[RMDB]
This 177-nucleotide RNA was probed chemically with 2A3 and DMS. 2A3 adducts were read by reverse transcription with SuperScript II with manganese. For DMS the reverse transcriptase was MarathonRT. The 2A3 profile rests on 1,058 reads. Source: RMDB library VIROID, as collected in RNAgym.
RNA sequence: GGGAACGACUCGAGUAGAGUCGAAAAACGAGGAGGUGGACUUCCGUGUCGUCCCGAAGAGGAAAGAAGACAGAGACACAAAAGUGUGAGUUUUGUAUUUUCUUUAUUCGGGAAAUGUUUGGAUGGGCUACGUACGAUACUUCGGUAUCGUACGUAGAAAAGAAACAACAACAACAAC
Reactivity to 2A3 in 0.01 (KOAc 150mM, MgCl2 10mM, bicine 150mM(pH8.5), 24C), signal-to-noise 1, nucleotides 027 to 126: a000c050g000a080g010g060a040g000g030u130g010g100a110c050u090u000c030c010g060u070g120u100c020g030u000c010c010c000g000a010a000g020a000g040g030a030a010a000g020a050a010g010a040c020a020g040a010g020a040c010a000c000a030a280a180a240g100u110g010u030g020a300g040u020u030u050u020g020u010a090u050u050u010u010c000u030u170u230a300u040u060c010g000g000g000a020a020a020u200g030u060u040u100g080g020a050u040g050g020g000
Reactivity to DMS in 0.01 (KOAc 150mM, MgCl2 10mM, bicine 150mM(pH8.5), 24C), signal-to-noise 2, nucleotides 027 to 126: a080c090g010a100g000g000a050g010g000u010g010g010a100c040u000u000c040c020g000u000g000u010c100g000u000c000c000c000g030a030a010g010a050g010g000a010a020a040g000a100a060g020a040c020a030g010a120g010a050c000a010c010a080a120a130a150g020u010g010u000g000a160g000u010u000u000u000g020u010a080u000u000u000u000c010u000u000u000a120u010u010c000g000g010g000a030a040a060u000g010u000u020u010g000g000a090u000g010g010g000